The record gives the reactivity of an RNA of 207 nucleotides to 2A3.
It was measured as part of the RMDB library VIROID.
The 2A3 profile rests on 579 reads.
The reactions ran in a buffer of 150 mM KOAc, 10 mM MgCl2 and 150 mM bicine (pH 8.5), at 24 C.
For 2A3 the reverse transcriptase was SuperScript II with manganese.
[RMDB]
RNA sequence: GGGAACGACUCGAGUAGAGUCGAAAAUCGCUCCAGGUUUCCCCGGGGAUCCCUGAAGCGCUCCUCCGAGCCGCCUUCUUUUUUCUUUUCUGCUCAGGAGGUCAGGUGUGAACCACAGGAACCACGAGUUUAGUUCCGAGGACCCAACUGCGGUUCCGAAGUAUAGUUACUUCGGUAACUAUACUUCAAAAGAAACAACAACAACAAC
Reactivity to 2A3 in 0.01 (KOAc 150mM, MgCl2 10mM, bicine 150mM(pH8.5), 24C), signal-to-noise 1, nucleotides 027 to 156: u150c030g000c000u040c030c020a050g000g010u060u030u030c010c020c030c020g000g000g080g000a010u010c000c020c020u010g030a070a060g250c030g150c210u020c010c030u000c070c070g000a010g050c020c000g080c130c030u120u190c040u170u270u110u070u100u090c060u240u300u140u040c050u120g030c010u020c030a090g020g010a000g000g000u010c000a000g040g030u100g040u040g270a040a010c000c000a030c030a080g000g030a000a010c010c020a010c020g000a000g000u040u080u060a020g000u000u070c000c000g000a130g000g000a040c000c010c010a250a160c230u240g020c120g110g000u060u030c010c020
2A3 is a SHAPE reagent: it acylates the 2'-hydroxyl of flexible nucleotides of all four kinds.